This 207-nucleotide RNA was probed chemically with 2A3.

[RMDB]
RNA sequence: GGGAACGACUCGAGUAGAGUCGAAAAUAUGCCAAAGCAAGGUCCAACCAGACUGAUUCUCCUACAGAUAACAGCUAUAAACUUCGCACAAAAUAUAAGAAGUAAACUAUCUGAAAGCCUUGGAGAGUGAAUAACAGCAGGUAGACUCUGGAGGAAACCAUGAUGAUGAGUUCGCUCAUCAUCAUGGAAAAGAAACAACAACAACAAC
Reactivity to 2A3 in 0.01 (KOAc 150mM, MgCl2 10mM, bicine 150mM(pH8.5), 24C), signal-to-noise 2, nucleotides 027 to 156: u130a020u050g040c020c010a010a010a060g050c020a060a000g040g000u050c040c010a010a050c030c020a120g070a110c010u030g000a060u060u080c000u010c040c010u040a060c000a010g050a060u020a110a090c030a020g030c100u040a040u160a300a150a060c020u010u010c010g060c060a140c050a100a090a300a020u240a080u140a140a000g000a000a000g000u030a040a000a020c030u020a010u000c000u010g050a220a100a080g030c050c060u070u030g000g010a000g000a000g030u050g020a060a180u110a100a040c020a010g000c000a010g000g010u030a010g000a010c020u030c080u120g030g050a030g000g020a040a030a020
2A3 adducts were read by reverse transcription with SuperScript II with manganese. The data come from the RNA Mapping Database (RMDB), library OK3TST.